[RMDB]
RNA sequence: GGGAACGACUCGAGUAGAGUCGAAAAAGAAUAUGUGCAACGUGUCAAAACAGCAAAUGACAGUGUGCAUCGAGCACACUACAUGACUUACUUCAAUGUGACUGUUUUCCAAAUGAAACCCGUAUUGAGUAUUGUAAGAAUGUCUCUGUACAGUGUACCGGUUAUCAUUAUUCGUAAUGAUAACCGGAAAAGAAACAACAACAACAAC
Reactivity to DMS in 0.01 (KOAc 150mM, MgCl2 10mM, bicine 150mM(pH8.5), 24C), signal-to-noise 3, nucleotides 027 to 156: a060g000a110a120u000a060u000g010u000g000c060a060a120c060g050u000g040u000c030a030a060a090a090c080a050g040c050a060a070a130u000g010a090c090a020g020u000g060u010g040c020a220u010c180g030a300g040c010a040c030a020c000u000a040c040a010u000g000a120c070u000u040a100c070u010u000c040a060a030u000g010u010g020a060c040u010g000u000u000u030u000c030c010a070a050a130u000g030a040a060a070c020c080c010g020u000a080u000u000g000a090g000u000a040u010u020g010u000a090a110g020a140a070u000g010u000c030u000c020u000g010u000a060c070a130g010u010g020u000a180
Reactivity to 2A3 in 0.01 (KOAc 150mM, MgCl2 10mM, bicine 150mM(pH8.5), 24C), signal-to-noise 6, nucleotides 027 to 156: a000g140a060a060u140a060u130g040u050g010c030a080a070c080g040u030g020u080c040a030a050a120a110c060a070g100c080a050a110a070u110g030a040c020a040g010u000g000u020g000c040a040u240c140g050a060g000c000a010c000a000c000u000a010c000a030u070g080a130c010u020u030a010c000u050u080c030a060a060u070g000u020g070a060c080u050g090u030u020u050u010c060c050a090a100a080u200g030a050a040a030c010c010c020g000u030a030u020u040g000a010g050u080a070u170u170g060u070a060a030g030a080a030u040g050u010c010u010c020u080g030u030a020c010a060g040u050g010u110a040
An RNA of 207 nucleotides, treated with DMS and 2A3 and read out base by base. Conditions: 150 mM KOAc, 10 mM MgCl2 and 150 mM bicine (pH 8.5), 24 C.